[RMDB]
RNA sequence: GGGAACGACUCGAGUAGAGUCGAAAACUGACGCUCCACAUGAUGCCAUCUUGGGUCAUUUCAUUUUUGGUUUAAUAACCCUAGGACUUUUAAUGAUUCAUAAUCCAGCUAUUCGAGGUGACCCUCGUCUUGAUCUUAGAUUCGUCUAAGAUCAAGAAAAAGAAACAACAACAACAAC
Reactivity to DMS in 0.01 (KOAc 150mM, MgCl2 10mM, bicine 150mM(pH8.5), 24C), signal-to-noise 7, nucleotides 027 to 126: c060u000g000a110c090g010c040u000c020c030a060c080a060u000g010a060u000g020c030c030a050u000c080u000u000g010g010g010u000c030a030u000u010u010c030a070u000u010u000u000u010g010g010u000u010u010a060a120u010a110a110c030c010c050u010a190g000g000a030c040u000u000u000u010a040a060u010g000a070u000u000c100a080u000a050a080u000c030c040a050g010c080u000a060u000u010c090g000a040g010g020u010g000a100c070c010c010u000c130g010
Reactivity to 2A3 in 0.01 (KOAc 150mM, MgCl2 10mM, bicine 150mM(pH8.5), 24C), signal-to-noise 5, nucleotides 027 to 126: c020u030g040a020c050g020c040u020c010c010a040c000a100u090g040a040u120g130c020c010a030u020c080u040u070g030g000g010u010c010a030u010u050u030c020a050u030u020u060u090u100g050g030u040u050u070a120a080u090a080a060c020c020c030u050a070g100g030a070c000u120u120u120u180a130a070u130g090a120u090u050c040a030u060a130a020u020c000c020a010g020c040u070a070u110u140c050g020a000g020g020u040g050a060c040c010c000u000c000g060